[RMDB]
RNA sequence: GGGAACGACUCGAGUAGAGUCGAAAAUCCUCGUAAGUGGACUAUAACAGUAGAACUCGUAUUAGUAGCCUAAUACUGCAGCCCUUUUUGGGGUUUGUUGUCCAUAUAGUUUAAGAUGGAAACAUAUUUGACACCAAUGAUUCGUCAUUGGUGUCAAAAAAGAAACAACAACAACAAC
Reactivity to DMS in 0.01 (KOAc 150mM, MgCl2 10mM, bicine 150mM(pH8.5), 24C), signal-to-noise 2, nucleotides 027 to 126: u000c000c000u030c230g000u060a080a130g030u000g000g010a090c000u010a040u060a100a090c070a050g050u020a020g000a050a090c070u000c090g000u000a120u000u000a010g050u000a190g030c110c040u040a060a040u000a020c010u010g050c160a070g050c000c000c000u030u000u000u010u070g000g000g000g030u000u040u010g030u000u010g010u000c000c000a010u000a060u050a160g000u010u020u000a060a110g020a070u000g000g000a030a060a020c020a020u030a120u000